Structure probing data (DMS and 2A3) for a 177-nucleotide construct. For DMS the reverse transcriptase was MarathonRT. The data come from the RNA Mapping Database (RMDB), library OK2TST. The reactions ran in a buffer of 150 mM KOAc, 10 mM MgCl2 and 150 mM bicine (pH 8.5), at 24 C. The DMS profile rests on 1,996 reads. The 2A3 profile rests on 3,187 reads.
RNA sequence: GGGAACGACUCGAGUAGAGUCGAAAACAAACGCUCAAUCGGAUUUCCGGAGGGUGAGCCCACGUGCAGGAGUUGGGUUCGACCGCUCCCUCCUAAAUCUCCUGUGCCUCGCUAUUUCAUUGCAGCACCUACGCUAUCAUUUCGAUGAUAGCGUAGGAAAAGAAACAACAACAACAAC
Reactivity to DMS in 0.01 (KOAc 150mM, MgCl2 10mM, bicine 150mM(pH8.5), 24C), signal-to-noise 2, nucleotides 027 to 126: c090a060a090a120c120g020c050u010c070a080a100u010c050g010g000a220u010u000u010c030c020g020g010a060g020g000g010u000g000a030g010c000c010c020a040c070g000u010g020c080a050g010g010a060g020u000u000g000g000g020u000u000c020g010a070c160c080g020c140u010c010c020c030u010c030c030u010a030a050a120u010c020u000c020c010u000g020u000g020c050c090u000c080g000c060u000a090u010u000u010c080a070u000u000g030c050a120g020c100a180
Reactivity to 2A3 in 0.01 (KOAc 150mM, MgCl2 10mM, bicine 150mM(pH8.5), 24C), signal-to-noise 3, nucleotides 027 to 126: c000a020a070a020c060g040c070u030c080a050a130u090c050g070g070a090u010u110u070c070c000g010g000a010g000g040g010u100g000a020g000c000c000c010a030c040g100u150g050c030a040g020g070a020g080u090u040g000g010g000u020u030c040g050a090c060c050g030c070u030c010c000c000u000c000c000u080a100a100a120u040c020u000c010c000u040g010u050g050c020c020u030c040g030c020u060a130u060u140u080c060a070u080u150g050c030a020g010c010a020
For 2A3 the reverse transcriptase was SuperScript II with manganese.